Chemical mapping of a 177-nucleotide RNA with 2A3 and DMS. For DMS, 10,421 sequencing reads were counted. The data come from the RNA Mapping Database (RMDB), library TTRDES. The 2A3 profile rests on 9,574 reads.
[RMDB]
RNA sequence: GGGAACGACUCGAGUAGAGUCGAAAAGAUAUGGAAGUUUAUCGCUCGAUAAGGAGCAUUCGGAAACGAAUGGCUCCUUUUGACGAGCGUGACUUCCUAAGUCAAAACACCGUGUUCGCACGGUGAACUUAGUUGAUACGUUCGCGUAUCAACUAAGAAAAGAAACAACAACAACAAC
Reactivity to 2A3 in 0.01 (KOAc 150mM, MgCl2 10mM, bicine 150mM(pH8.5), 24C), signal-to-noise 4, nucleotides 027 to 126: g020a020u050a040u100g020g020a010a030g000u010u110u240a300u300c010g010c000u000c000g110a120u060a300a010g010g000a000g010c000a000u000u000c020g020g030a070a070a060c010g020a000a010u020g160g040c000u000c020c050u000u010u000u020g020a010c010g000a000g000c000g000u010g000a000c000u000u000c000c000u010a060a000g030u020c010a020a000a090a150c010a010c000c010g000u000g040u040u080c300g040c110a000c010g010g000u010g000a030a010
Reactivity to DMS in 0.01 (KOAc 150mM, MgCl2 10mM, bicine 150mM(pH8.5), 24C), signal-to-noise 6, nucleotides 027 to 126: g010a020u000a300u020g000g000a020a010g010u000u000u010a150u020c010g020c000u000c000g020a150u010a010a010g010g000a010g010c000a030u000u000c010g010g000a110a070a160c000g010a020a010u000g010g010c000u000c000c000u000u000u000u010g010a220c170g010a010g010c010g030u000g000a010c000u000u000c010c000u000a010a080g010u000c040a110a100a140a240c010a010c010c000g020u000g000u000u010c270g030c020a010c000g000g010u000g000a030a120